[RMDB]
This 207-nucleotide RNA was probed chemically with 2A3. 2A3 adducts were read by reverse transcription with SuperScript II with manganese.
RNA sequence: GGGAACGACUCGAGUAGAGUCGAAAAUUUGGCUAGCAAUUACAUUUUCGUUUGUGAGAAGAAACAGGAGAGAUUUUAGACAAUGUUGCGUUUGUGCAGUGUCAGAGUUUUUGAGAAGCACACCACCGCCGUUGGUGUCGCUAAAAUCGUCGUGUUCGAACAGGUAGGCAUUCGUGCCUACCUGUUCAAAAGAAACAACAACAACAAC
Reactivity to 2A3 in 0.01 (KOAc 150mM, MgCl2 10mM, bicine 150mM(pH8.5), 24C), signal-to-noise 1, nucleotides 027 to 156: u050u020u110g020g050c070u100a060g000c050a010a150u220u060a080c050a060u040u100u030u090c020g090u070u060u100g070u040g000a060g000a100a000g070a010a090a050c100a010g130g080a100g020a000g040a010u030u040u110u210a130g000a060c010a030a050u020g030u010u050g080c050g070u000u210u090g060u040g050c050a060g000u040g010u090c030a000g000a010g100u050u050u080u150u210g080a130g030a040a010g020c000a030c000a000c030c000a000c000c050g190c000c000g080u050u000g000g000u000g030u050c030g000c010u000a000a000a000a100u040c060g030u010c020g000u030g030u030u050c010